RNA sequence: GGGAACGACUCGAGUAGAGUCGAAAAACUUAAUAUUCGUAUUAAGUGAAUGUCCUAAGUCAUUUGGGAGUAGUAGACAAUGAUGUAGUCGGAAACGACUAUUGAGUCUACGCUUUGAUCAAAUGAUAUGGAACCAUCCCAUGGUUCGCCAUGGGAAGUCUCCUAAAAACUUCGGUUUUUAGGAGACAAAAGAAACAACAACAACAAC
Reactivity to DMS in 0.01 (KOAc 150mM, MgCl2 10mM, bicine 150mM(pH8.5), 24C), signal-to-noise 1, nucleotides 027 to 156: a110c000u000u000a000a010u000a030u010u010c170g020u010a030u000u000a000a000g010u000g000a080a090u000g010u010c010c000u000a050a230g000u000c010a010u000u010u000g010g000g010a010g010u000a060g040u000a010g010a020c010a060a070u030g000a030u000g020u000a020g030u000c000g050g010a190a170a200c030g010a020c000u000a000u000u010g000a050g010u010c000u000a010c000g010c040u000u000u000g040a120u000c000a000a000a040u010g000a040u000a190u000g000g000a060a090c020c020a080u000c010c000c010a010u000g000g050u000u020c300g050c000c000a010u000g000g000g000a020a020
Reactivity to 2A3 in 0.01 (KOAc 150mM, MgCl2 10mM, bicine 150mM(pH8.5), 24C), signal-to-noise 4, nucleotides 027 to 156: a010c000u000u000a000a010u040a040u030u100c090g010u000a000u000u020a010a000g010u030g090a130a110u140g030u040c010c000u030a130a020g020u000c010a010u000u010u020g050g030g010a020g020u250a060g000u000a010g090a010c030a150a300u150g010a020u120g050u010a010g000u000c010g010g000a080a060a020c010g000a010c000u000a000u020u050g030a020g010u000c000u000a000c000g000c000u020u030u080g170a150u130c000a010a000a000u000g010a000u000a030u070g020g000a040a030c030c000a030u030c000c000c000a000u000g000g050u070u070c260g030c080c000a000u010g000g000g000a010a010
Notes: This 207-nucleotide RNA was probed chemically with DMS and 2A3. The 2A3 profile rests on 3,515 reads. 2A3 is a SHAPE reagent: it acylates the 2'-hydroxyl of flexible nucleotides of all four kinds. It was measured as part of the RMDB library RNAMAK.